[RMDB]
RNA sequence: GGGAACGACUCGAGUAGAGUCGAAAACUCAUGGUAGAGCGGUUUGUGUCUUUGGCUAUAGAUGCUUACCCUCUCACAAAGCAUGAAGAUAUAGAAUACCAGAAUGUAUUCUGGGUCUACUUACAGUCAACGUUGAGGUUCGCCUCAACGAAAAGAAACAACAACAACAAC
Reactivity to 2A3 in 0.01 (KOAc 150mM, MgCl2 10mM, bicine 150mM(pH8.5), 24C), signal-to-noise 9, nucleotides 027 to 129: c000u010c000a040u060g100g020u120a000g000a020g020c130g010g010u020u000u010g010u000g010u000c000u040u090u120g130g000c030u050a030u070a250g010a010u000g000c000u000u000a000c000c000c010u000c000u020c010a020c010a020a160a010g070c040a040u080g060a120a040g070a030u110a010u040a160g080a080a040u090a300c010c010a020g050a060a050u170g080u250a240u080u020c010u020g010g010g010u000c010u040a080c030u070u110a080c040a080g050u070c030a110a030
Reactivity to DMS in 0.01 (KOAc 150mM, MgCl2 10mM, bicine 150mM(pH8.5), 24C), signal-to-noise 9, nucleotides 027 to 129: c050u040c020a060u010g030g010u020a000g000a010g030c280g010g010u020u000u020g040u030g000u030c020u000u010u010g020g020c180u050a000u040a050g000a020u000g000c000u000u000a000c000c020c020u050c010u000c080a090c130a090a130a100g040c060a050u030g000a040a010g010a080u040a120u020a080g030a060a050u010a110c000c110a030g020a080a060u070g030u020a090u030u000c000u020g010g010g000u030c010u030a000c040u040u050a060c170a020g010u000c070a090a140

This 170-nucleotide RNA was probed chemically with 2A3 and DMS.
For DMS the reverse transcriptase was MarathonRT.
Conditions: 150 mM KOAc, 10 mM MgCl2 and 150 mM bicine (pH 8.5), 24 C.
The 2A3 profile rests on 60,458 reads.
Reactivities are given for positions 27 through 129.
Values are in units of 0.01, from 0 to 300, in steps of 10.